Source: RMDB library M2RFPK, as collected in RNAgym. An RNA of 207 nucleotides, treated with 2A3 and DMS and read out base by base.
[RMDB]
RNA sequence: GGGAACGACUCGAGUAGAGUCGAAAACGAGGGGUGGGCGAAAGCUGCCAUGAGACCGUAACUUUCGUAGUCAUUGAUAAAGGGGCAGGUCUCGCUCUUUUGUCAUUGCGGUUGCCUAGAGGCAUGGAAAACCAUGACAGGUUCGCCUGUCAUGGAACGUCAAAGGUAACUUCGGUUACCUUUGACGAAAAGAAACAACAACAACAAC
Reactivity to 2A3 in 0.01 (KOAc 150mM, MgCl2 10mM, bicine 150mM(pH8.5), 24C), signal-to-noise 3, nucleotides 027 to 156: c050g010a070g040g060g010g040u150g030g000g000c040g010a060a000a000g010c010u020g020c020c010a080u100g050a030g020a030c010c010g040u050a030a050c040u090u120u090c100g030u020a040g080u030c030a060u040u050g010a000u040a070a030a020g000g000g000g000c010a030g020g200u050c060u030c080g000c000u000c000u000u030u010u020g030u020c020a030u000u060g000c050g020g030u010u040g010c010c000u080a080g010a130g060g030c050a040u080g030g000a000a170a000a020c000c010a000u010g000a000c000a000g000g040u050u050c150g060c050c000u000g000u000c000a000u000g010g010a000a000
Reactivity to DMS in 0.01 (KOAc 150mM, MgCl2 10mM, bicine 150mM(pH8.5), 24C), signal-to-noise 2, nucleotides 027 to 156: c080g010a120g020g000g000g010u000g030g030g030c000g000a030a040a010g020c000u000g020c010c070a190u010g000a180g040a100c100c070g060u000a040a050c040u000u000u000c110g010u000a100g000u000c090a170u020u010g010a050u000a010a020a010g040g000g010g000c040a170g000g020u010c070u010c120g020c010u000c010u000u000u010u000g010u010c020a080u010u020g010c080g030g060u000u000g010c020c040u000a130g010a130g020g010c030a080u020g040g010a090a050a130a280c010c000a000u000g020a000c000a000g010g000u000u000c300g040c030c000u000g060u000c000a020u000g000g020a000a020
The RNA was probed in 150 mM KOAc, 10 mM MgCl2 and 150 mM bicine (pH 8.5) at 24 C. The 2A3 profile rests on 2,357 reads.